RNA sequence: GGGAACGACUCGAGUAGAGUCGAAAACGGAAGCAUUAAAACCAUUCGAGCUAGUCAAUGCGUGGCGUGCCUCUCCGCAGCGUGUUGGCGAAUGUAAAGAGUGACUAAGCAUGUAGUACCGAGGAUGAUAAGAGCAAUUCGUUCGCGAAUUGCUCAAGUCCUCUACAUCGUUCGCGAUGUAGAGGACAAAAGAAACAACAACAACAAC
Reactivity to 2A3 in 0.01 (KOAc 150mM, MgCl2 10mM, bicine 150mM(pH8.5), 24C), signal-to-noise 2, nucleotides 027 to 156: c060g020g050a050a010g050c030a030u070u080a030a030a080a070c040c000a020u060u070c070g050a020g090c060u080a030g080u030c010a000a020u020g010c000g030u020g060g000c040g010u080g040c000c010u050c000u010c050c000g000c000a000g020c030g000u050g000u000u010g000g000c000g020a010a020u070g050u060a050a070a050g070a000g030u050g010a040c020u060a050a030g040c040a060u110g020u100a020g040u010a140c010c040g000a070g040g030a060u150g000a020u140a220a050g000a000g000c000a000a000u000u000c000g030u000u030c100g000c010g150a000a000u000u000g000c000u000c000a000a000
Reactivity to DMS in 0.01 (KOAc 150mM, MgCl2 10mM, bicine 150mM(pH8.5), 24C), signal-to-noise 1, nucleotides 027 to 156: c020g010g010a210a140g020c000a150u000u010a090a010a100a090c040c020a040u000u040c080g000a240g030c010u000a120g000u000c000a040a040u000g000c000g130u000g000g020c080g040u000g000c110c030u000c050u010c160c030g140c030a020g000c020g070u000g090u000u000g030g000c000g000a090a050u000g010u000a090a170a120g000a150g010u000g000a030c050u000a140a130g020c060a050u040g030u000a070g010u000a050c020c130g000a110g000g010a080u000g040a210u010a210a280g000a000g020c010a000a000u000u000c050g070u000u000c300g030c030g050a070a000u000u000g040c000u000c000a000a020
The record gives the reactivity of an RNA of 207 nucleotides to 2A3 and DMS. It was measured as part of the RMDB library M2RFPK. The reactions ran in a buffer of 150 mM KOAc, 10 mM MgCl2 and 150 mM bicine (pH 8.5), at 24 C. The 2A3 profile rests on 1,578 reads. Values cover nucleotides 27 to 156.